Structure probing data (DMS) for a 177-nucleotide construct.
For DMS the reverse transcriptase was MarathonRT.
RNA sequence: GGGAACGACUCGAGUAGAGUCGAAAAUGUCGCGCAGCGGUUGCACCGUCGUCGUUUCAACCGGCAGCUCAAGAAAGCCAUGGAAAAAGGCAUCAAGCCCGAGGCGGCUAAAUGAACCUCGACAACGAGUCACGUUGAGAUUCGUCUCAACGUGACUAAAAGAAACAACAACAACAAC
Reactivity to DMS in 0.01 (KOAc 150mM, MgCl2 10mM, bicine 150mM(pH8.5), 24C), signal-to-noise 1, nucleotides 027 to 126: u050g020u020c080g000c130g030c050a080g000c040g000g040u000u000g010c170a110c070c050g000u000c070g020u020c100g070u040u000u010c050a090a040c080c040g000g010c070a020g000c010u000c040a120a020g000a040a190a110g000c000c030a140u000g010g010a060a090a030a070a170g020g000c070a060u000c130a200a110g010c000c000c020g010a060g030g080c100g000g020c050u010a090a060a080u000g000a070a110c040c010u010c000g000a070c030a010a070c070g000